This 177-nucleotide RNA was probed chemically with DMS. The data come from the RNA Mapping Database (RMDB), library OK2TRN. For DMS the reverse transcriptase was MarathonRT.

RNA sequence: GGGAACGACUCGAGUAGAGUCGAAAAGGACGGCAUAAGGAUAGCCUAUAGCCACACAAGCAAGCGUGACGAGUGCUGCAAUCCAGAAUGUGCGGAUCAUGAUUGCGCGGUUGGCCGAAGAUCCGGAGGUACGUAGGGCGUUCGCGCCCUACGUACCAAAAGAAACAACAACAACAAC
Reactivity to DMS in 0.01 (KOAc 150mM, MgCl2 10mM, bicine 150mM(pH8.5), 24C), signal-to-noise 2, nucleotides 027 to 126: g010g010a020c110g010g000c010a040u000a070a080g000g000a130u000a060g000c000c000u000a300u000a280g000c000c040a040c110a030c040a080a300g000c010a000a040g000c050g000u000g050a020c060g010a210g010u010g000c000u000g000c110a040a110u020c160c140a100g000a080a030u000g020u000g030c010g030g080a100u000c020a010u000g000a090u000u000g010c040g040c300g010g000u000u000g000g030c010c010g010a290a040g000a050u000c000c000g000g010a280

Source information:
Reactivities are given for positions 27 through 126. The DMS profile rests on 865 reads. The reactions ran in a buffer of 150 mM KOAc, 10 mM MgCl2 and 150 mM bicine (pH 8.5), at 24 C.